Source information:
An RNA of 177 nucleotides, treated with DMS and read out base by base. Reactivities are rounded to 0.1 and cut off at 0 and 3. Reactivities are given for positions 27 through 126. The RNA was probed in 150 mM KOAc, 10 mM MgCl2 and 150 mM bicine (pH 8.5) at 24 C.

RNA sequence: GGGAACGACUCGAGUAGAGUCGAAAAGCAUUGGGAAAGUUAAUCAAAAGUGCAUCAAAACUUUCCCUAAACGAAAUCAAAAUCGUUAUGAUGCACUUUUGACAUCGAUUAAGAUGAAUAGACACAAAGAAGGGAGUAGUUUCGACUACUCCCUUCUAAAAGAAACAACAACAACAAC
Reactivity to DMS in 0.01 (KOAc 150mM, MgCl2 10mM, bicine 150mM(pH8.5), 24C), signal-to-noise 2, nucleotides 027 to 126: g000c100a070u010u010g000g000g000a040a100a080g010u000u010a120a190u010c010a000a010a000a020g010u000g000c000a010u020c010a070a100a050a190c100u000u000u000c010c000c000u000a000a020a030c020g000a010a050a040u020c300a120a030a170a070u000c000g000u000u010a260u010g000a000u000g010c000a040c000u000u000u010u000g000a030c030a010u010c010g000a300u000u000a170a050g000a010u000g000a070a120u000a090g010a130c080a080c110a050a090